[RMDB]
RNA sequence: GGGAACGACUCGAGUAGAGUCGAAAAGAUCUCAGACCUCUAGCCUCCAGAACUGUUAGAAAAUAAAUUUCUAUUGUUUAAUUGACCCAAUUUGUGACAGUUUGUUACAGCAGCCUUAGCAAGCUAAUAUGGGCUGAUUGUUUAUGCCAACGAUGUGACUAGACCAUCUUUUCGAAGAUGGUCUAGUAAAAGAAACAACAACAACAAC
Reactivity to 2A3 in 0.01 (KOAc 150mM, MgCl2 10mM, bicine 150mM(pH8.5), 24C), signal-to-noise 1, nucleotides 027 to 156: g000a000u090c010u030c090a070g100a250c000c080u090c000u040a010g010c000c010u030c050c040a030g010a080a000c000u000g000u070u040a030g040a040a040a010a080u260a100a000a050u060u100u150c030u040a090u210u000g030u050u190u050a080a150u020u090g000a010c020c000c030a020a020u060u050u230g030u000g030a000c000a040g100u000u100u010g050u100u150a020c000a010g000c040a010g020c000c000u000u060a010g000c060a150a050g010c030u140a060a030u140a160u180g000g010g010c010u000g040a170u000u160g060u050u110u020a100u140g070c080c050a020a010c140g000a000u140g000u060g030
Reactivity to DMS in 0.01 (KOAc 150mM, MgCl2 10mM, bicine 150mM(pH8.5), 24C), signal-to-noise 2, nucleotides 027 to 156: g000a070u010c010u010c020a130g010a170c040c020u000c060u020a150g010c000c010u000c020c010a090g010a030a060c030u000g000u000u010a100g000a070a050a060a220u000a030a140a170u010u000u000c020u000a130u010u010g000u000u000u010a070a170u010u010g000a150c050c010c000a060a220u030u000u030g030u000g030a030c040a100g000u000u000u000g040u000u000a040c060a070g030c050a070g020c040c000u000u030a080g000c040a040a100g000c030u000a060a060u000a170u000g000g050g060c000u000g000a110u000u000g010u000u000u000a110u010g010c000c030a060a110c100g030a120u000g000u000g030

Notes
The record gives the reactivity of an RNA of 207 nucleotides to 2A3 and DMS. The data come from the RNA Mapping Database (RMDB), library OK3TST.